[RMDB]
RNA sequence: GGGAACGACUCGAGUAGAGUCGAAAAUGCCUGGCACUGCGAAUUUGGAGGCACAGAUGGUACAAUGAAGCACCUGCGGUCUCAUCGGGACUCGUGUGCUCGAUGGUAGGGGAACGAUCGCCACCACGCAUUUGCAAUCGUUCGCGAUUGCAAAUGCAAAAGAAACAACAACAACAAC
Reactivity to 2A3 in 0.01 (KOAc 150mM, MgCl2 10mM, bicine 150mM(pH8.5), 24C), signal-to-noise 4, nucleotides 027 to 126: u070g020c010c000u020g030g060c020a040c060u040g060c020g080a100a070u110u070u120g050g030a050g000g000c030a000c030a090g120a060u070g030g060u120a050c060a060a090u250g080a140a010g020c030a020c030c060u110g020c090g040g000u000c010u000c040a090u110c050g040g000g000a030c050u060c140g080u140g030u140g120c000u020c030g040a060u020g030g080u070a120g000g010g040g010a010a040c020g020a020u060c010g020c020c010a030c000c020a060c070
Reactivity to DMS in 0.01 (KOAc 150mM, MgCl2 10mM, bicine 150mM(pH8.5), 24C), signal-to-noise 1, nucleotides 027 to 126: u000g000c020c000u000g000g000c020a010c040u000g000c060g020a060a100u010u000u020g000g000a060g020g020c070a080c020a050g000a070u000g000g010u030a040c130a080a040u020g010a130a090g000c060a000c000c040u000g030c110g000g000u010c040u050c010a030u000c080g000g010g000a010c020u000c070g000u020g000u050g000c040u000c000g030a020u030g020g010u000a120g000g000g000g040a120a180c140g000a070u000c000g010c010c090a040c040c060a090c300